Structure probing data (2A3 and DMS) for a 207-nucleotide construct. 2A3 adducts were read by reverse transcription with SuperScript II with manganese. The 2A3 profile rests on 4,980 reads.
RNA sequence: GGGAACGACUCGAGUAGAGUCGAAAAACAUGCUGGCCAACCCAACCCCACGAUCCGCCAUCGGCAUGAUCAUGAUGUGUUCUCAAAUAUCAGGCCAGUAAAUCACCAUGCUCGUGCUGGUAAAGGCAACUUAUGCCCAAGUUCGCUUGGGCAUAAACCUUGAGUAAGAGUUCGCUCUUACUCAAGGAAAAGAAACAACAACAACAAC
Reactivity to 2A3 in 0.01 (KOAc 150mM, MgCl2 10mM, bicine 150mM(pH8.5), 24C), signal-to-noise 5, nucleotides 027 to 156: a000c050a030u070g000c000u000g000g010c000c000a050a040c110c010c060a040a100c020c040c030c030a080c070g070a130u090c080c110g000c010c000a030u020c010g000g020c000a000u010g000a000u010c000a000u010g070a060u100g030u000g030u060u040c040u020c060a050a080a030u230a080u120c070a060g020g000c010c000a000g010u010a020a080a030u090c000a010c040c000a000u010g000c000u000c010g000u010g000c010u010g000g010u040a120a140a050g030g000c000a020a030c000u020u010a000u010g000c000c000c000a020a000g000u010u040c070g030c130u000u000g020g000g000c000a000u000a000a000a000
Reactivity to DMS in 0.01 (KOAc 150mM, MgCl2 10mM, bicine 150mM(pH8.5), 24C), signal-to-noise 2, nucleotides 027 to 156: a100c040a120u000g010c010u010g010g000c010c010a080a180c100c060c040a130a190c020c030c010c020a100c170g020a090u010c040c050g040c060c010a080u000c040g040g040c010a030u010g010a010u000c020a040u000g010a030u010g030u010g060u000u000c050u000c020a110a070a180u010a060u000c060a050g030g040c010c010a040g060u000a030a060a120u010c010a030c010c010a030u000g020c100u010c000g050u010g010c000u000g000g030u000a050a070a060g020g000c040a090a140c110u000u000a010u000g010c000c010c020a030a020g030u000u020c200g040c000u000u000g000g010g000c020a000u000a000a030a130